[RMDB]
Annotation
Structure probing data (DMS) for a 177-nucleotide construct.
RNA sequence: GGGAACGACUCGAGUAGAGUCGAAAAAUUCAGCUUCCGCACUCCUCCCCUUACCGGGCCCAAGAGCUUCCCCUACAGGUUGGGCCUGAUUGGGGACCUGGGCCAGACGGAGAAUUCAGCGCAGACGCAUAGGGUCACUGUUCGCAGUGACCCUAUGAAAAGAAACAACAACAACAAC
Reactivity to DMS in 0.01 (KOAc 150mM, MgCl2 10mM, bicine 150mM(pH8.5), 24C), signal-to-noise 2, nucleotides 027 to 126: a080u010u010c070a060g010c060u000u000c020c050g010c070a130c030u000c010c010u000c010c000c020c020u000u020a080c110c020g030g020g000c000c000c000a030a040g000a100g010c130u010u000c000c000c000c020u010a100c070a050g020g000u000u000g020g010g000c000c000u020g000a070u000u000g010g020g000g010a020c040c050u000g010g000g020c010c050a060g020a300c090g000g000a040g000a060a070u000u000c110a090g000c040g020c110a090g010a040c260g000
Source: RMDB library OK2TRN, as collected in RNAgym. The RNA was probed in 150 mM KOAc, 10 mM MgCl2 and 150 mM bicine (pH 8.5) at 24 C. For DMS the reverse transcriptase was MarathonRT.